[RMDB]
RNA sequence: GGGAACGACUCGAGUAGAGUCGAAAACAAAGCGCCAUACUUUGGAGUACUAUUUUCUGAGCCCUAACAGCCACAAAUGGAAGAAGUAUUCCCCUGUACAGAAAAGUUUGCAUUACUUUUGUCAGAUUAUGUCUCUUAAUAUAAUCACAUUUUAUGAACUGAUAAAUUAGUUCGCUAAUUUAUCAGUAAAAGAAACAACAACAACAAC
Reactivity to 2A3 in 0.01 (KOAc 150mM, MgCl2 10mM, bicine 150mM(pH8.5), 24C), signal-to-noise 4, nucleotides 027 to 156: c030a000a050a030g030c040g040c050c030a060u050a080c020u050u080u080g000g030a030g000u000a020c020u030a140u070u090u000u040c050u080g050a040g020c000c000c020u050a070a050c030a020g030c050c030a050c060a100a130a110u220g050g010a020a030g020a060a000g040u010a040u030u020c010c000c000c020u050g080u130a040c020a020g170a040a100a040a020g020u090u150u110g030c040a040u100u090a080c010u060u070u070u000g060u080c040a010g000a090u000u040a040u080g070u000c020u000c010u190u170a120a060u140a100u090a120a040u130c070a030c010a090u090u170u150u160a110u190g050a070
Reactivity to DMS in 0.01 (KOAc 150mM, MgCl2 10mM, bicine 150mM(pH8.5), 24C), signal-to-noise 2, nucleotides 027 to 156: c030a040a050a070g020c040g040c040c080a110u000a060c030u000u010u000g010g020a120g000u000a060c040u000a150u000u010u010u010c020u000g020a230g020c020c000c010u000a080a120c200a140g000c050c020a260c060a080a080a140u010g020g020a050a050g000a070a080g010u000a100u000u000c020c010c030c020u010g030u000a090c030a100g010a080a070a070a140g000u000u000u010g010c070a120u000u000a080c060u020u010u000u000g000u000c030a070g010a150u010u000a040u010g010u000c020u000c080u000u000a060a060u010a100u000a010a080u010c040a050c060a100u000u010u010u000a050u010g010a090
Structure probing data (2A3 and DMS) for a 207-nucleotide construct. The reactions ran in a buffer of 150 mM KOAc, 10 mM MgCl2 and 150 mM bicine (pH 8.5), at 24 C. For 2A3, 1,675 sequencing reads were counted. The data come from the RNA Mapping Database (RMDB), library OK3TST.